[RMDB]
RNA sequence: GGGAACGACUCGAGUAGAGUCGAAAAAAGUUGCCUUUAGUGCAGAUCUUGAUGGUAGUAGCAAAUAUUCAAAAGAAUUUACUUUGAAGGCCGAAGUGGAGAAGGGUUCCAUAACAAUGGAAUUCAUUCGCAUUAUGUAUUUCGAUACAUAAUGCGAAAAAGAAACAACAACAACAAC
Reactivity to 2A3 in 0.01 (KOAc 150mM, MgCl2 10mM, bicine 150mM(pH8.5), 24C), signal-to-noise 4, nucleotides 027 to 126: a000a020g110u090u040g020c010c000u060u050u060a090g010u020g100c020a020g010a070u010c040u070u140g100a140u100g070g040u050a040g020u030a010g030c030a020a120a120u070a080u060u140c030a060a070a060a020g070a060a060u110u040u070a040c010u010u060u080g020a030a010g040g000c000c000g060a070a020g050u070g040g080a140g030a110a090g020g020g020u000u010c000c000a020u030a100a040c130a110a110u030g000g010a000a010u000u000c020a040u020
Reactivity to DMS in 0.01 (KOAc 150mM, MgCl2 10mM, bicine 150mM(pH8.5), 24C), signal-to-noise 3, nucleotides 027 to 126: a090a010g010u000u020g000c020c010u000u020u020a100g010u010g020c100a030g020a070u010c020u000u000g030a130u000g000g010u010a040g000u010a070g030c120a060a050a130u000a050u000u000c040a020a090a030a040g000a100a050u040u010u000a030c040u000u000u020g000a080a040g020g020c030c020g010a060a050g030u000g030g000a040g020a060a120g000g010g000u000u000c000c000a020u000a120a060c300a060a040u000g000g000a010a020u010u010c010a110u010
An RNA of 177 nucleotides, treated with 2A3 and DMS and read out base by base. It was measured as part of the RMDB libraries RFM100 and RFMREP. Values cover nucleotides 27 to 126.